Chemical mapping of a 177-nucleotide RNA with 2A3 and DMS.
The reactions ran in a buffer of 150 mM KOAc, 10 mM MgCl2 and 150 mM bicine (pH 8.5), at 24 C.
Values cover nucleotides 27 to 126.

RNA sequence: GGGAACGACUCGAGUAGAGUCGAAAAACGUCGUCCGCCACCAAAUCACCAUCGCAACUUCCACAACAUCUUCCUGAACACCGAAAGCAAAGUGGACGGGGAGAACUACAACAAGACCGCGGAGACGGAUUAUAUACCCUUUCGAGGGUAUAUAAUCAAAAGAAACAACAACAACAAC
Reactivity to 2A3 in 0.01 (KOAc 150mM, MgCl2 10mM, bicine 150mM(pH8.5), 24C), signal-to-noise 9, nucleotides 027 to 126: a000c010g030u020c030g130u010c010c010g020c030c020a070c010c020a050a040a050u130c050a060c080c020a040u060c030g000c050a020a040c030u070u020c030c020a060c020a110a040c010a110u010c000u010u000c000c000u010g020a030a000c000a010c010c020g120a220a080a020g130c120a070a050a020g020u010g010g010a020c000g000g000g010g000a010g010a010a020c030u150a050c030a140a000c010a060a040g050a060c030c020g010c010g030g000a010g000a010c010g000
Reactivity to DMS in 0.01 (KOAc 150mM, MgCl2 10mM, bicine 150mM(pH8.5), 24C), signal-to-noise 8, nucleotides 027 to 126: a140c050g000u010c030g010u010c000c010g000c000c080a050c070c040a030a090a060u010c090a080c070c030a060u020c030g000c050a040a050c040u000u010c020c010a080c110a120a090c270a090u020c000u010u000c000c000u000g010a040a230c020a010c000c060g000a100a100a140g030c240a080a120a110g010u000g010g000a300c010g020g000g000g000a010g010a000a100c150u020a070c140a060a040c150a060a050g000a070c050c080g010c020g000g000a140g010a040c060g000